[RMDB]
RNA sequence: GGGAACGACUCGAGUAGAGUCGAAAAGCACCCGGUACACGUACGGUGCGAACACUUGAGCGGAUCCUCCGGAGCUCUUGUGGAUUAGGACGUUCUCGACGAUCUGCGGAUUCGAGUUCGUCCGAAAGGGUAGGUUCUCCUUCGGGAGGACCUACCCAAAAGAAACAACAACAACAAC
Reactivity to 2A3 in 0.01 (KOAc 150mM, MgCl2 10mM, bicine 150mM(pH8.5), 24C), signal-to-noise 4, nucleotides 027 to 126: g020c020a060c060c060c030g090g060u180a070c150a010c120g130u230a010c040g000g000u010g000c020g000a040a030c030a010c010u010u030g010a000g000c020g100g100a150u110c000c040u070c060c100g120g040a090g000c020u000c000u010u020g030u030g000g030a070u090u130a040g010g000a000c000g000u000u000c000u000c000g020a040c110g070a020u030c010u020g020c140g210g000a030u030u030c000g020a000g000u000u000c000g000u000c000c010g000a010a020a010
Reactivity to DMS in 0.01 (KOAc 150mM, MgCl2 10mM, bicine 150mM(pH8.5), 24C), signal-to-noise 2, nucleotides 027 to 126: g000c000a040c020c000c170g020g000u020a040c150a120c220g010u010a060c130g000g010u020g010c000g030a070a140c000a060c010u000u000g030a070g040c000g000g000a150u030c070c010u000c060c020g020g000a300g030c000u000c020u000u000g000u030g000g010a140u000u050a060g000g000a040c010g020u000u000c000u000c030g000a000c300g000a050u000c000u020g010c110g000g000a060u020u000c010g000a000g000u000u000c000g020u000c000c000g000a010a030a120